RNA sequence: GGGAACGACUCGAGUAGAGUCGAAAAAGCCUGGAUGCUAGCUAGGCAGAGAGCCAACAUCACCUUAGAUGAAUUGAGAAUGAUCACUCCAGUCUCUACAUCCACCAACCUAGCCCACCGGUUGAGGAAUUUACGGACGAUUCGUCGUCCGUAAAUUAAAAGAAACAACAACAACAAC
Reactivity to 2A3 in 0.01 (KOAc 150mM, MgCl2 10mM, bicine 150mM(pH8.5), 24C), signal-to-noise 2, nucleotides 027 to 126: a010g040c040c020u060g010g010a050u090g060c100u050a070g000c010u020a030g040g000c000a000g110a010g000a020g060c030c000a000a030c000a060u030c020a080c020c190u150u120a060g020a160u070g080a090a140u090u110g050a050g020a080a120u120g110a100u060c000a030c050u000c000c020a020g030u000c000u020c020u060a050c000a040u000c030c010a020c050c000a080a010c020c010u020a080g040c000c010c010a040c010c010g020g010u030u010g070a090g010g060
Reactivity to DMS in 0.01 (KOAc 150mM, MgCl2 10mM, bicine 150mM(pH8.5), 24C), signal-to-noise 2, nucleotides 027 to 126: a090g010c040c040u000g020g020a060u010g010c130u000a030g000c110u000a040g010g000c060a090g000a120g020a080g000c020c020a060a110c090a060u000c010a080c150c070u010u010a090g010a060u000g000a070a050u000u000g000a070g000a090a090u010g010a050u000c140a130c060u000c040c010a090g010u010c030u000c010u010a090c090a050u010c010c040a090c100c050a030a030c020c010u000a090g000c010c030c010a060c120c080g000g010u010u020g000a110g000g020